[RMDB]
RNA sequence: GGGAACGACUCGAGUAGAGUCGAAAACAAGCUUGCUCGGGUGACUCGACAGCGAAUCGAGUAAGGCGAAUGAGCGAACGAUUCGAUGAGAUCAGAAGUGGUUUAUUUUGCAGCCGAGAGCCGAGACGCAAGGAGAGUAUUUCGAUACUCUCCUUGCAAAAGAAACAACAACAACAAC
Reactivity to 2A3 in 0.01 (KOAc 150mM, MgCl2 10mM, bicine 150mM(pH8.5), 24C), signal-to-noise 3, nucleotides 027 to 126: c030a040a050g070c010u120u170g020c020u030c020g010g000g100u110g070a090c010u020c000g040a040c010a060g060c040g060a030a060u020c010g010a020g070u080a070a070g080g010c030g000a050a190u150g070a060g020c020g010a020a040c010g030a030u030u060c000g060a090u110g040a050g010a080u030c050a050g090a200a060g110u050g050g050u040u060u110a160u040u140u120u110g020c030a010g030c000c000g030a040g000a010g030c030c030g030a040g020a030c070
Reactivity to DMS in 0.01 (KOAc 150mM, MgCl2 10mM, bicine 150mM(pH8.5), 24C), signal-to-noise 3, nucleotides 027 to 126: c110a180a160g020c080u000u000g000c000u000c000g020g000g020u000g010a180c040u000c030g000a040c030a120g010c090g000a050a090u000c010g000a060g000u000a120a110g000g010c010g010a100a170u000g020a120g020c020g000a060a190c060g000a050u010u000c010g010a080u000g010a130g000a070u000c030a040g020a110a090g010u000g010g010u000u000u000a070u000u000u010u000g020c060a070g020c020c030g010a060g000a250g010c020c020g000a070g030a150c260

Chemical mapping of a 177-nucleotide RNA with 2A3 and DMS. The data come from the RNA Mapping Database (RMDB), library OK2TST. Conditions: 150 mM KOAc, 10 mM MgCl2 and 150 mM bicine (pH 8.5), 24 C. For DMS the reverse transcriptase was MarathonRT.